[RMDB]
The record gives the reactivity of an RNA of 177 nucleotides to 2A3. The RNA was probed in 150 mM KOAc, 10 mM MgCl2 and 150 mM bicine (pH 8.5) at 24 C. For 2A3, 649 sequencing reads were counted.
RNA sequence: GGGAACGACUCGAGUAGAGUCGAAAAGAAUUGGUAUGUAAGCUACUGCUUCCGGUAGCUGCGUCACACUUUAAGAGUGUGCAUACUGAGCCGAAGCUCAGCUUCGGUCCCCCAAGGGAAGACCAAACGGGUGCAUGACUUUCGAGUCAUGCACCCGAAAAGAAACAACAACAACAAC
Reactivity to 2A3 in 0.01 (KOAc 150mM, MgCl2 10mM, bicine 150mM(pH8.5), 24C), signal-to-noise 1, nucleotides 027 to 126: g120a050a120u040u030g010g000u000a000u000g000u000a010a000g000c020u000a000c030u000g000c000u000u010c020c010g000g000u010a000g050c000u020g000c000g000u000c000a000c000a000c010u040u300u300a300a140g110a010g290u020g060u000g030c000a000u000a000c000u000g000a000g000c000c000g000a000a000g000c000u030c300a010g000c030u020u000c030g040g000u000c000c010c000c010c030a020a060g020g000g000a000a000g000a000c000c060a040a120a010